[RMDB]
RNA sequence: GGGAACGACUCGAGUAGAGUCGAAAAAGCUGCUCAAAAUCGGCGGAAAGGACCCCGCUAUCGGGAGCGGCUAGCAGCGAGGGUUGCCGCUCCAGCCGCGCUAUGAAGCAGUCAUAGCAGAUUUACAACCUAAUAAUCCAUUCGUGGAUUAUUAGGUAAAAGAAACAACAACAACAAC
Reactivity to 2A3 in 0.01 (KOAc 150mM, MgCl2 10mM, bicine 150mM(pH8.5), 24C), signal-to-noise 9, nucleotides 027 to 126: a000g020c010u010g000c010u040c100a060a100a070a160u180c070g030g000c020g020g040a120a110a090g170g030a070c020c010c020c010g000c030u100a110u210c110g090g010g010a000g000c000g010g010c010u020a030g010c030a000g020c010g080a150g040g150g040u080u060g020c000c000g000c010u000c000c000a000g010c010c020g050c020g000c010u010a010u030g020a060a020g100c100a020g060u020c000a000u010a000g000c030a020g020a100u140u180u130a090c060a070
Reactivity to DMS in 0.01 (KOAc 150mM, MgCl2 10mM, bicine 150mM(pH8.5), 24C), signal-to-noise 9, nucleotides 027 to 126: a110g010c010u000g000c020u000c170a070a050a100a080u010c100g010g020c010g000g000a070a090a120g010g010a160c110c050c010c030g010c040u000a060u010c130g010g000g000a030g010c010g000g000c020u000a030g010c050a030g000c060g000a100g010g010g010u010u000g020c020c000g000c030u000c010c010a090g020c110c090g010c150g010c020u000a020u000g010a070a170g010c100a080g000u000c010a010u000a020g010c020a160g010a110u010u010u010a090c210a110

Structure probing data (2A3 and DMS) for a 177-nucleotide construct. The DMS profile rests on 16,840 reads. For DMS the reverse transcriptase was MarathonRT. Values cover nucleotides 27 to 126. The reactions ran in a buffer of 150 mM KOAc, 10 mM MgCl2 and 150 mM bicine (pH 8.5), at 24 C. Reactivities are rounded to 0.1 and cut off at 0 and 3.